[RMDB]
RNA sequence: GGGAACGACUCGAGUAGAGUCGAAAAGCGGCAGGCAGAUGGACGUUGCGCCGCGCUCGGCCAGAACCUUGGCCGUAGCUGCAUUAUAGACAUUGACGAGCGGGCCGACCGUGUGCGGCUUGCCGGAGCCUCGUCACUAGUUCGCUAGUGACGAGGCAAAAGAAACAACAACAACAAC
Reactivity to 2A3 in 0.01 (KOAc 150mM, MgCl2 10mM, bicine 150mM(pH8.5), 24C), signal-to-noise 1, nucleotides 027 to 126: g090c000g020g000c030a000g000g000c010a020g040a140u120g050g070a000c000g070u070u110g020c130g010c060c010g090c010g030c000u010c000g000g010c010c010a010g010a260a240c030c070u050u060g000g040c000c000g000u030a020g000c100u080g030c010a080u070u140a080u200a150g100a060c090a080u060u140g040a060c020g030a040g000c000g010g050g000c010c010g000a000c000c060g090u070g100u160g180c060g020g040c060u000u020g010c010c010g000g000a000
Reactivity to DMS in 0.01 (KOAc 150mM, MgCl2 10mM, bicine 150mM(pH8.5), 24C), signal-to-noise 1, nucleotides 027 to 126: g000c020g000g030c030a050g000g000c010a100g030a100u010g010g020a050c040g010u010u000g010c090g040c020c020g000c030g000c020u000c020g000g000c040c010a050g000a080a150c270c120u000u000g000g000c000c030g020u000a000g000c090u020g000c070a120u000u000a130u000a110g020a090c160a160u000u010g000a090c100g000a130g000c000g020g030g030c010c030g000a030c100c120g020u000g000u010g050c080g000g000c010u000u000g030c000c000g000g020a160